This 177-nucleotide RNA was probed chemically with DMS and 2A3. For DMS, 3,628 sequencing reads were counted. In probing experiments dimethyl sulfate is read out at A N1 and C N3, which are open when not base-paired. The reactions ran in a buffer of 150 mM KOAc, 10 mM MgCl2 and 150 mM bicine (pH 8.5), at 24 C.
[RMDB]
RNA sequence: GGGAACGACUCGAGUAGAGUCGAAAAGAUAUGGACUGCGUGUAGGGAGCGUACGGUCGGAAACGACCGGAUACGCGAGGAUCUACCGCAGUCCUAAGUCAAACGUGGCGACUUCGGUCGCCACGAACUCAUUUAGCUACUUCGGUAGCUAAAUGAGAAAAGAAACAACAACAACAAC
Reactivity to DMS in 0.01 (KOAc 150mM, MgCl2 10mM, bicine 150mM(pH8.5), 24C), signal-to-noise 2, nucleotides 027 to 126: g010a010u000a280u000g010g000a030c000u010g030c040g020u000g000u000a010g010g020g000a120g030c010g040u000a060c030g000g030u010c000g020g010a060a030a160c000g010a010c000c000g010g010a150u000a010c000g010c000g000a130g040g000a110u000c000u010a000c000c000g000c000a010g010u000c000c000u000a000a050g010u000c010a090a140a230c030g020u010g000g030c000g010a020c000u000u000c250g020g010u000c000g020c010c010a010c000g010a030a080
Reactivity to 2A3 in 0.01 (KOAc 150mM, MgCl2 10mM, bicine 150mM(pH8.5), 24C), signal-to-noise 2, nucleotides 027 to 126: g030a000u030a020u080g000g000a000c000u000g020c030g040u300g000u120a010g010g110g090a300g070c010g010u010a000c020g000g000u000c000g020g000a040a020a000c000g000a000c000c010g040g030a030u030a000c030g010c010g060a190g130g010a220u010c000u010a000c010c000g040c020a010g000u000c000c000u000a000a000g000u000c000a040a060a020c030g010u000g010g000c010g000a010c010u060u160c300g140g000u020c000g000c010c000a000c010g010a010a000